[RMDB]
An RNA of 177 nucleotides, treated with 2A3 and DMS and read out base by base. Source: RMDB library OK2TST, as collected in RNAgym. 2A3 adducts were read by reverse transcription with SuperScript II with manganese.
RNA sequence: GGGAACGACUCGAGUAGAGUCGAAAAAUUGGAACUGAAAAACAUAAAAGGUGAGCUUUGGAAAUAUCUUUGAGCAAUUUAUUCGUUAUGAACACAUGUAAUCUGUUGGAACAAAGUUCUAGGACAAGAAUAGUACUACCUUCGGGUAGUACUAUUCAAAAGAAACAACAACAACAAC
Reactivity to 2A3 in 0.01 (KOAc 150mM, MgCl2 10mM, bicine 150mM(pH8.5), 24C), signal-to-noise 3, nucleotides 027 to 126: a020u070u120g030g000a020a020c010u030g030a050a040a040a060a010c030a010u200a070a120a050a040g050g010u040g030a040g010c010u060u090u090g070g050a070a130a080u130a040u030c020u090u090u160g010a020g030c000a040a080u080u080u050a050u040u130c010g050u140u100a050u180g020a030a000c020a000c010a050u080g040u100a040a050u010c040u030g050u030u100g030g030a040a020c010a020a060a000g000u000u030c000u040a050g040g100a040c020a110a020
Reactivity to DMS in 0.01 (KOAc 150mM, MgCl2 10mM, bicine 150mM(pH8.5), 24C), signal-to-noise 4, nucleotides 027 to 126: a080u010u010g010g010a040a070c030u000g000a060a090a100a110a080c060a060u000a050a050a120a100g010g010u000g010a070g010c030u000u010u010g010g000a100a100a100u010a030u010c030u000u010u010g000a120g010c060a090a060u000u000u000a080u020u000c050g000u000u010a050u010g010a060a030c100a030c080a050u000g010u000a080a070u000c090u000g010u000u010g010g010a080a070c080a030a100a090g010u000u000c000u010a080g000g010a130c170a080a120